[RMDB]
RNA sequence: GGGAACGACUCGAGUAGAGUCGAAAAGAUAUGGACCUAGGGAGGAUAAUUUCGGAAACGAAAUGAAAUCCAUCGAUCUAGUGUCCUAAGUCAAACGAUGAUCACGCCUUCGGGCGUGAUCAUCGAACAGUAAGAAGUGCUUCGGCACUUCUUACUGAAAAGAAACAACAACAACAAC
Reactivity to 2A3 in 0.01 (KOAc 150mM, MgCl2 10mM, bicine 150mM(pH8.5), 24C), signal-to-noise 2, nucleotides 027 to 126: g020a010u080a040u120g030g010a000c000c010u000a030g000g000g010a070g000g000a000u010a100a050u160u000u000c000g000g010a060a060a040c030g000a040a030a010u070g040a170a130a030u010c040c000a090u300c010g000a010u000c000u000a050g040u070g000u300c010c000u000a110a010g050u030c040a140a040a070c040g000a010u010g000a010u010c000a010c020g020c000c000u090u130c300g090g000g000c000g040u000g000a020u000c000a010u000c010g000a000a010
Reactivity to DMS in 0.01 (KOAc 150mM, MgCl2 10mM, bicine 150mM(pH8.5), 24C), signal-to-noise 3, nucleotides 027 to 126: g010a060u000a300u000g000g000a020c010c010u000a010g000g010g010a030g020g000a030u010a160a050u000u000u000c010g020g000a080a080a180c000g000a000a010a000u010g000a110a100a060u000c000c090a260u010c180g010a070u020c000u030a010g000u020g000u000c000c000u000a010a100g010u000c050a110a100a180c040g000a010u000g000a000u000c000a020c020g010c000c000u000u000c220g010g010g000c000g030u000g000a000u000c000a010u000c000g030a020a070

An RNA of 177 nucleotides, treated with 2A3 and DMS and read out base by base. Conditions: 150 mM KOAc, 10 mM MgCl2 and 150 mM bicine (pH 8.5), 24 C. The data come from the RNA Mapping Database (RMDB), library TTRDEL. The DMS profile rests on 2,262 reads.